[RMDB]
RNA sequence: GGGAACGACUCGAGUAGAGUCGAAAAACAAGGACAUGAAUACCAGGAGGCAAGAGUCCCUGAGGACCAUCUUGGAGGCUGGCUAUCACAUCUCUGGAUGAAAGGACAUUAUGGUAUCAGAAAAAGAAUGUAUGUUUUGAAAACCAGUAGACCUGGAUCGUAAGAGCGUUUUCGAACGCUCUUACGAAAAAGAAACAACAACAACAAC
Reactivity to 2A3 in 0.01 (KOAc 150mM, MgCl2 10mM, bicine 150mM(pH8.5), 24C), signal-to-noise 1, nucleotides 027 to 156: a000c040a000a000g050g030a000c040a190u080g030a090a050u070a030c030c060a010g020g000a020g030g030c060a020a020g050a010g040u000c020c000c040u070g040a150g060g030a050c060c010a020u060c040u000u090g010g010a040g000g080c020u000g000g070c010u060a070u190c000a020c010a100u030c010u000c010u090g020g000a060u060g070a130a050a000g000g010a010c020a030u040u170a050u140g040g000u080a070u060c020a060g090a050a060a000a020a020g070a060a090u040g010u040a150u030g040u030u000u040u100g070a040a060a040a070c010c040a000g020u070a050g180a160c060c000u010g020g050a060
Structure probing data (2A3) for a 207-nucleotide construct. Conditions: 150 mM KOAc, 10 mM MgCl2 and 150 mM bicine (pH 8.5), 24 C. For 2A3 the reverse transcriptase was SuperScript II with manganese. Reactivities are given for positions 27 through 156. It was measured as part of the RMDB library OK3TST.